RNA sequence: GGGAACGACUCGAGUAGAGUCGAAAACAGGCUACAACUUAUUGUAGAGUGGGAGAGUGCAUUGAUAGUAAAGCUGGUUUUUGCUUUGGUGGCGAUAACUGGUUUGUCUACGACAAUGAGUUUGGCAAUGGAUACAUCUGUGGUAAUUCUGUGCUAGGUUUAGAAGACACUUCGGUGUCUUCUAAACAAAAGAAACAACAACAACAAC
Reactivity to DMS in 0.01 (KOAc 150mM, MgCl2 10mM, bicine 150mM(pH8.5), 24C), signal-to-noise 2, nucleotides 027 to 156: c040a110g040g040c000u010a050c030a060a110c110u010u010a040u010u010g030u000a070g000a080g000u020g030g000g020a080g000a100g030u000g030c050a110u010u010g010a150u000a120g020u010a070a050a050g000c020u000g030g000u000u000u000u000u000g030c000u000u010u000g040g040u000g010g000c020g000a040u010a010a050c010u000g010g020u000u000u020g020u000c040u010a030c050g020a110c040a040a070u010g010a120g010u000u000u000g010g000c010a060a100u000g010g000a130u010a070c060a100u000c050u010g020u000g000g020u010a050a160u000u000c030u010g030u000g010c130u010a090g010
Reactivity to 2A3 in 0.01 (KOAc 150mM, MgCl2 10mM, bicine 150mM(pH8.5), 24C), signal-to-noise 4, nucleotides 027 to 156: c040a010g090g000c010u050a010c030a070a030c030u110u120a050u220u110g010u040a050g010a050g140u080g010g010g010a050g010a030g030u080g000c030a030u060u060g050a070u070a060g060u080a050a050a010g010c020u020g040g020u010u010u020u020u050g030c010u170u100u100g150g050u180g050g000c020g010a020u020a030a010c010u000g050g000u020u000u060g030u010c020u030a030c060g090a010c020a000a010u060g000a020g090u040u100u050g010g000c000a040a050u050g020g030a020u040a100c050a050u050c020u070g030u030g040g040u040a090a040u080u060c020u010g040u020g050c030u030a040g050